This 177-nucleotide RNA was probed chemically with DMS and 2A3.
For DMS, 2,177 sequencing reads were counted.
RNA sequence: GGGAACGACUCGAGUAGAGUCGAAAAAAAUUCGUUGCUUUUAGGGAUGAGAGUGGCUUUUUUAGGGGUGUUAUGAAAAAGGCGCGCGGCGAUAAAAACCGCUGCCAUGCCUGUCCCGCAAGCCAGCCCAAGAAUGUAAGUUCGCUUACAUUCUUGGAAAAGAAACAACAACAACAAC
Reactivity to DMS in 0.01 (KOAc 150mM, MgCl2 10mM, bicine 150mM(pH8.5), 24C), signal-to-noise 3, nucleotides 027 to 126: a040a040a090u000u010c100g020u000u000g000c020u010u000u010u010a060g010g000g000a120u000g000a100g000a040g010u000g010g000c020u000u010u010u000u000u010a110g000g000g010g010u000g020u000u000a120u010g000a040a050a050a130a070g010g000c020g050c300g030c000g000g000c000g000a140u010a070a050a060a120a050c290c000g010c000u010g020c010c070a040u000g020c030c000u010g020u000c010c010c030g010c270a030a050g000c040c040a100g000c200
Reactivity to 2A3 in 0.01 (KOAc 150mM, MgCl2 10mM, bicine 150mM(pH8.5), 24C), signal-to-noise 1, nucleotides 027 to 126: a000a000a000u150u070c060g000u060u050g060c050u090u090u050u200a070g000g010g030a030u090g050a020g010a070g160u030g000g000c000u020u160u050u000u090u190a070g000g020g000g040u140g050u160u160a080u080g060a000a110a070a040a020g030g040c040g060c060g000c040g000g000c000g000a010u120a200a270a030a020a000c060c020g010c000u010g000c020c020a020u000g000c010c000u000g020u010c010c000c000g000c000a000a010g030c020c000a030g000c000